This 207-nucleotide RNA was probed chemically with 2A3 and DMS.
RNA sequence: GGGAACGACUCGAGUAGAGUCGAAAAAGCCGGCCCCGGCAUGUAGCUCGGGAUGUGGCUGGUAACGUCUUCGGCGACGUAGUGGCUGUCCGUGGACGGCGACGGGGCCAUCUCAUGCAGGCCCAUGAAACCCAGGGCACGCUCCGCAGCGAAGUACGUUAUCAAUGUGGUUCGCCACAUUGAUAACAAAAGAAACAACAACAACAAC
Reactivity to 2A3 in 0.01 (KOAc 150mM, MgCl2 10mM, bicine 150mM(pH8.5), 24C), signal-to-noise 3, nucleotides 027 to 156: a000g010c020c010g030g000c010c000c000c010g010g040c040a030u210g110u130a040g040c030u020c090g000g000g020a050u120g040u070g080g050c000u000g000g010u050a070a030c020g030u000c000u100u040c070g100g040c020g030a100c020g030u030a020g110u090g140g080c070u030g060u090c010c040g130u120g050g010a020c040g010g040c040g020a030c080g010g000g020g040c010c000a050u020c080u040c040a120u160g080c080a040g020g000c000c000c010a020u070g030a070a040a020c000c000c010a010g010g040g010c010a010c020g000c010u020c000c020g030c040a050g040c010g010a040a010g070u160a040c080
Reactivity to DMS in 0.01 (KOAc 150mM, MgCl2 10mM, bicine 150mM(pH8.5), 24C), signal-to-noise 1, nucleotides 027 to 156: a090g020c040c000g060g010c000c000c000c020g020g000c000a080u000g020u000a130g000c020u040c070g060g020g020a120u010g000u010g030g020c030u010g020g020u000a040a110c040g010u000c000u000u000c060g050g000c010g010a070c030g000u000a140g040u010g020g030c050u000g030u000c000c010g010u000g030g050a080c060g000g010c050g000a190c110g010g000g020g060c000c020a140u010c050u000c110a100u010g000c120a160g040g000c000c000c000a080u000g000a130a100a100c060c020c000a090g020g040g010c020a060c000g000c020u010c040c010g000c090a110g020c020g010a060a110g000u010a070c130

Overview: 2A3 adducts were read by reverse transcription with SuperScript II with manganese. Reactivities are given for positions 27 through 156. For 2A3, 1,891 sequencing reads were counted. The RNA was probed in 150 mM KOAc, 10 mM MgCl2 and 150 mM bicine (pH 8.5) at 24 C.